This 177-nucleotide RNA was probed chemically with DMS and 2A3. Source: RMDB library TTRDEL, as collected in RNAgym. For DMS the reverse transcriptase was MarathonRT. Conditions: 150 mM KOAc, 10 mM MgCl2 and 150 mM bicine (pH 8.5), 24 C. The 2A3 profile rests on 2,239 reads.
RNA sequence: GGGAACGACUCGAGUAGAGUCGAAAAGAUAUGGAUCGUUUACAUGCUGAUGACCUCGGAAACGAGCAAGGCAGUAACUGCGAUCCUAAGUCAAACCUGCUUAUCCGCUUCGGCGGAUAAGCAGGAACCAGCAGAUAUGGUUCGCCAUAUCUGCUGGAAAAGAAACAACAACAACAAC
Reactivity to DMS in 0.01 (KOAc 150mM, MgCl2 10mM, bicine 150mM(pH8.5), 24C), signal-to-noise 2, nucleotides 027 to 126: g020a040u010a300u020g030g000a010u000c010g060u000u010u000a030c030a090u000g030c000u000g050a090u040g010a130c300c000u010c010g000g020a130a090a210c030g000a020g000c040a070a160g020g010c000a010g010u000a030a020c300u010g000c040g010a000u010c000c020u000a030a170g000u000c010a120a140a140c000c020u010g030c000u000u030a020u000c010c000g000c000u000u000c130g020g000c000g010g000a000u000a000a000g020c000a000g000g000a010a040
Reactivity to 2A3 in 0.01 (KOAc 150mM, MgCl2 10mM, bicine 150mM(pH8.5), 24C), signal-to-noise 2, nucleotides 027 to 126: g020a030u050a050u160g010g000a000u010c000g010u000u010u030a160c200a300u130g000c000u030g040a300u130g080a180c030c010u040c020g000g060a090a080a070c020g000a030g020c000a090a140g040g000c020a000g000u010a030a070c140u120g010c000g010a010u000c000c000u010a120a030g050u030c040a100a030a060c000c020u000g000c040u000u040a000u020c000c000g010c030u110u050c250g160g030c020g000g000a010u020a000a000g000c000a010g000g000a000a010